[RMDB]
RNA sequence: GGGAACGACUCGAGUAGAGUCGAAAAGAUAUGGACUAUGAAUGGCAUCGAUCUCCCGAUUCGGAAACGAAUCGGAGGGAGCCAUCAUAGUCCUAAGUCAAAACGUGAAUUCGUUCGCGAAUUCACGCGACUUUGUUUGGUUCGCCAAACAAAGUCGAAAAGAAACAACAACAACAAC
Reactivity to 2A3 in 0.01 (KOAc 150mM, MgCl2 10mM, bicine 150mM(pH8.5), 24C), signal-to-noise 2, nucleotides 027 to 126: g020a000u010a010u050g010g010a000c000u000a020u040g030a160a090u000g090g000c010a060u300c300g040a030u000c010u010c040c020c020g010a000u000u000c010g010g000a000a000a000c000g020a000a000u010c000g000g010a010g000g000g010a020g000c000c000a000u000c000a020u010a000g010u000c010c000u000a010a000g000u020c000a020a080a030a100c010g000u000g010a000a000u010u010c010g020u040u140c300g000c020g190a010a010u030u020c000a000c000g060
Reactivity to DMS in 0.01 (KOAc 150mM, MgCl2 10mM, bicine 150mM(pH8.5), 24C), signal-to-noise 2, nucleotides 027 to 126: g020a000u000a020u000g000g010a000c000u000a010u000g000a040a030u020g010g050c010a300u010c200g010a060u010c000u010c010c040c120g010a010u000u010c000g020g010a000a000a030c010g020a000a000u010c000g000g000a010g010g000g010a000g040c000c010a010u000c000a000u000a030g000u000c000c000u000a010a020g010u000c010a130a040a110a300c060g010u000g000a010a020u000u000c000g030u000u010c240g000c020g020a020a000u000u000c000a020c000g000

Structure probing data (2A3 and DMS) for a 177-nucleotide construct.
The data come from the RNA Mapping Database (RMDB), library TTRDES.
DMS adducts were read by reverse transcription with MarathonRT.